Overview:
Conditions: 150 mM KOAc, 10 mM MgCl2 and 150 mM bicine (pH 8.5), 24 C. An RNA of 177 nucleotides, treated with 2A3 and DMS and read out base by base. The DMS profile rests on 1,691 reads.

RNA sequence: GGGAACGACUCGAGUAGAGUCGAAAAAAGAGGCUGGAGCUUGAGCAUGCACAGAAAUUUAUAACACGCCUCUAUAGUUGGUUAUUUGAGAAGUCUGGGCGUGACUACAUCCCCGGCCGCCAGCUGCGUACUAGGACUGAUUCGUCAGUCCUAGUACAAAAGAAACAACAACAACAAC
Reactivity to 2A3 in 0.01 (KOAc 150mM, MgCl2 10mM, bicine 150mM(pH8.5), 24C), signal-to-noise 1, nucleotides 027 to 126: a010a010g100a060g000g000c040u040g030g000a040g030c030u040u040g020a000g000c000a010u050g040c050a020c010a030g090a020a060a080u110u190u000a060u050a040a000c000a010c090g050c000c020u070c060u100a170u150a110g060u040u060g050g000u080u040a040u080u070u130g140a120g000a180a080g090u000c010u020g010g010g000c000g020u020g050a150c010u100a090c010a000u010c000c000c000c000g000g000c010c050g010c000c000a010g040c020u070g040c010
Reactivity to DMS in 0.01 (KOAc 150mM, MgCl2 10mM, bicine 150mM(pH8.5), 24C), signal-to-noise 2, nucleotides 027 to 126: a100a110g030a230g010g020c000u000g000g020a170g020c080u000u000g040a050g000c020a010u000g010c020a040c010a030g000a030a080a080u000u000u000a030u000a020a010c030a040c150g000c040c040u000c240u000a060u000a090g000u000u010g020g000u000u010a030u010u010u020g000a180g010a150a100g000u000c010u010g000g020g010c010g030u000g000a110c020u000a070c070a060u000c040c010c000c030g000g000c030c020g010c000c010a090g020c100u010g000c230